[RMDB]
RNA sequence: GGGAACGACUCGAGUAGAGUCGAAAAUUCUUCAAGGGUAGGAAACUUAACAUAGUCGCGCUUAGUUCGCUCGCUGAGUGCCGGCGCUACGUCGAGGAAGCGGCUGCCAUCUUGGAGGCUAUGCAGGUACGCUCAGAACGUUUACGAACUCUGGAUGCACUCUGAGUCUAUUCGUAGACUCAGAGUGAAAAGAAACAACAACAACAAC
Reactivity to 2A3 in 0.01 (KOAc 150mM, MgCl2 10mM, bicine 150mM(pH8.5), 24C), signal-to-noise 2, nucleotides 027 to 156: u040u010c010u080u050c040a020a080g020g010g020u090a060g040g060a070a100a020c040u090u050a140a000c070a070u160a020g020u030c030g020c010g000c000u090u020a080g020u160u140c050g030c030u000c030g070c090u100g030a000g030u050g040c040c030g040g000c020g000c040u110a020c040g100u060c050g040a040g020g000a090a010g020c010g040g000c000u000g000c030c010a040u030c060u070u100g010g010a020g010g010c060u040a030u120g000c030a010g090g010u050a040c020g000c040u040c010a030g040a130a010c030g030u040u090u080a050c050g000a070a000c020u000c000u050g080g000a060u080g000